[RMDB]
RNA sequence: GGGAACGACUCGAGUAGAGUCGAAAAUCUCGCAAGUUCGCUUGCGAGAGUAAUAAAUAAAAUGGGUUCAACUCCCCCCCAUUUCCGAGGGUAUCGGAAACCGUACAAACGGCUUCGGCCGUUUGAAUAACGCAUAGGUAUUCGUACCUAUGCGUUAAAAAGAAACAACAACAACAAC
Reactivity to 2A3 in 0.01 (KOAc 150mM, MgCl2 10mM, bicine 150mM(pH8.5), 24C), signal-to-noise 1, nucleotides 027 to 126: u020c000u000c000g020c010a000a020g040u090u130c150g030c120u000u060g010c000g020a010g000a000g000u000a000a090u010a060a070a010u120a060a060a020a090u050g030g020g030u080u120c060a110a100c100u020c150c000c000c000c000c000c000a080u050u020u000c000c000g040a000g020g070g040u130a010u000c000g010g000a000a030a000c050c040g020u140a070c000a010a000a000c000g010g000c000u020u010c200g140g070c000c000g000u000u010u000g000a000a000
Reactivity to DMS in 0.01 (KOAc 150mM, MgCl2 10mM, bicine 150mM(pH8.5), 24C), signal-to-noise 3, nucleotides 027 to 126: u000c000u010c000g000c000a000a010g000u010u010c190g020c000u010u000g010c000g010a000g010a010g000u000a060a040u010a070a080a070u010a080a030a080a140u010g010g010g010u000u000c180a100a300c090u000c020c010c000c030c000c000c010a180u000u000u000c010c000g010a020g000g010g010u020a050u010c000g020g000a010a010a050c300c150g020u000a100c010a010a000a010c010g000g000c000u000u010c190g040g010c000c000g000u000u000u000g010a070a110